[RMDB]
RNA sequence: GGGAACGACUCGAGUAGAGUCGAAAAUAAGGUAAAGCAGAGUCAGGAACAACGAAUCCCUUUAUGAUAAACAGAUUCAUUUUGCAAGUUCGUUAUUACGGGUAGUUUCCUACAAAGGAUCGGACUACUCCACCAUAGAGUUCGCUCUAUGGUGGAGAAAAGAAACAACAACAACAAC
Reactivity to 2A3 in 0.01 (KOAc 150mM, MgCl2 10mM, bicine 150mM(pH8.5), 24C), signal-to-noise 1, nucleotides 027 to 126: u060a010a030g060g060u040a060a090a000g050c010a020g040a010g110u110c120a020g010g030a080a050c040a050a020c100g050a010a020u040c000c010c020u090u080u000a110u070g030a020u090a030a170a010c010a060g030a020u010u100c010a030u060u110u050u120g070c040a130a150g050u030u000c020g010u040u030a040u100u120a080c000g000g000g060u000a000g010u000u060u000c020c030u040a020c090a010a110a040g050g000a050u170c040g040g020a000c000u040a070
Reactivity to DMS in 0.01 (KOAc 150mM, MgCl2 10mM, bicine 150mM(pH8.5), 24C), signal-to-noise 2, nucleotides 027 to 126: u020a090a070g000g020u000a060a040a100g000c090a070g000a040g000u000c040a040g000g000a060a070c100a050a020c090g010a090a070u000c120c110c070u000u000u010a020u050g010a090u010a020a130a090c190a100g000a080u010u000c020a080u000u010u000u000g020c100a090a130g010u000u000c000g010u000u010a040u040u010a090c080g000g000g000u010a030g000u000u000u000c020c000u000a060c170a040a020a070g020g010a060u000c040g010g000a070c160u000a090